[RMDB]
RNA sequence: GGGAACGACUCGAGUAGAGUCGAAAAAGCCCCGGGGCAACUCUUCUCAGAAUCCAGCGGAGGCGUGGAGAGAGGGCCGCGGUGCUCUGGAGUAGAGGCUCUGUCUUCGAAACACCAUCGAUCGUCCCUUCUUCUUUACCUUCCUUCGGCUCUUCGACGAAAUAUAGAACUUCGGUUCUAUAUUUCGAAAAGAAACAACAACAACAAC
Reactivity to 2A3 in 0.01 (KOAc 150mM, MgCl2 10mM, bicine 150mM(pH8.5), 24C), signal-to-noise 2, nucleotides 027 to 156: a000g040c010c000c020c010g040g000g020g080c040a080a100c060u020c060u260u100c090u060c040a070g060a190a180u300c030c020a120g030c140g010g000a000g000g040c130g020u020g040g010a000g000a000g000a000g010g010g010c010c030g010c000g000g000u000g000c000u000c000u010g010g000a000g000u010a000g000a010g010g010c040u090c250u300g300u160c000u060u000c000g010a020a030a000c000a010c170c050a010u000c000g100a300u020c000g010u000c000c000c000u070u020c020u080u000c010u070u010u040a040c000c000u010u030c000c000u030u080c040g050g000c010u000c010u070u030c010g010a020
Source: RMDB library VIROID, as collected in RNAgym. This 207-nucleotide RNA was probed chemically with 2A3. The RNA was probed in 150 mM KOAc, 10 mM MgCl2 and 150 mM bicine (pH 8.5) at 24 C.